[RMDB]
RNA sequence: GGGAACGACUCGAGUAGAGUCGAAAAGAUAUGGAUUGAACUACCUCUAUACAUUCGUUGAAAGAUACACUCUUAUCGGAAACGAUAAGAGUGUAUCUGGAGAAUGUAAAUGAGGCAAUCCUAAGUCCUUACGUUUAUACUUCGGUAUAAACGUAAGAAAAGAAACAACAACAACAAC
Reactivity to 2A3 in 0.01 (KOAc 150mM, MgCl2 10mM, bicine 150mM(pH8.5), 24C), signal-to-noise 5, nucleotides 027 to 126: g070a020u170a060u300g000g010a010u010u030g020a140a100c130u140a140c270c000u000c010u030a080u000a100c000a020u010u050c020g300u300u110g010a040a030a000g000a010u000a000c000a010c010u020c000u000u020a010u020c000g030g050a140a110a080c000g000a000u000a010a010g010a000g000u000g000u000a000u000c000u000g010g010a010g000a000a000u010g010u010a030a050a100u300g000a000g000g000c000a000a000u000c000c000u040a270a050g110u070c010
Reactivity to DMS in 0.01 (KOAc 150mM, MgCl2 10mM, bicine 150mM(pH8.5), 24C), signal-to-noise 9, nucleotides 027 to 126: g010a100u000a290u010g010g010a010u010u000g000a110a120c220u020a300c000c000u000c000u010a300u000a020c000a010u000u000c000g010u000u020g010a240a100a020g000a010u000a000c000a010c000u000c000u000u000a000u000c000g000g000a160a090a220c000g010a020u000a000a000g000a020g020u000g000u000a000u000c000u000g000g000a060g000a010a010u000g010u010a000a060a110u010g000a010g000g000c010a010a010u000c000c000u000a090a160g010u000c050
This 177-nucleotide RNA was probed chemically with 2A3 and DMS.
The RNA was probed in 150 mM KOAc, 10 mM MgCl2 and 150 mM bicine (pH 8.5) at 24 C.
For DMS the reverse transcriptase was MarathonRT.
The data come from the RNA Mapping Database (RMDB), library TTRINS.
The 2A3 profile rests on 14,172 reads.